[RMDB]
RNA sequence: GGGAACGACUCGAGUAGAGUCGAAAAAAAGAUAUGGAGCCUUGAGAGCUUGGAUUUAUGGGAGGGAACAUUCGGAAACGAAUGGGAACUCCCAUUGUCAGCUCAAGAUGAGGGCUCCUAAGUCAAAGAAUCACAUAUUGUUCGCAAUAUGUGAUUCAAAAGAAACAACAACAACAAC
Reactivity to 2A3 in 0.01 (KOAc 150mM, MgCl2 10mM, bicine 150mM(pH8.5), 24C), signal-to-noise 3, nucleotides 027 to 126: a000a000a030g090a040u130a080u170g020g010a000g030c010c020u060u030g070a050g010a010g060c060u150u240g120g000a040u300u300u100a010u020g000g000g000a030g010g000g000a000a000c000a000u010u020c000g010g020a060a120a050c010g000a000a010u010g000g000g000a010a010c000u010c000c000c000a000u010u000g000u000c020a000g020c000u000c000a000a010g240a070u300g280a060g180g020g020c000u020c000c000u010a090a030g040u020c040a050a090a100
Reactivity to DMS in 0.01 (KOAc 150mM, MgCl2 10mM, bicine 150mM(pH8.5), 24C), signal-to-noise 4, nucleotides 027 to 126: a090a070a110g020a070u000a300u000g000g010a020g020c000c000u000u010g020a200g000a010g000c010u000u020g010g010a010u000u000u000a010u000g010g010g030a030g010g000g000a300a270c000a000u000u000c000g010g000a080a140a200c000g020a010a010u000g000g000g000a300a290c010u000c000c000c000a000u000u000g010u000c000a040g000c000u010c020a020a280g020a300u000g020a050g010g010g010c000u000c000c010u000a010a040g000u000c030a140a120a180
Source: RMDB library TTRDES, as collected in RNAgym.
This 177-nucleotide RNA was probed chemically with 2A3 and DMS.
The 2A3 profile rests on 4,830 reads.
Values cover nucleotides 27 to 126.
The RNA was probed in 150 mM KOAc, 10 mM MgCl2 and 150 mM bicine (pH 8.5) at 24 C.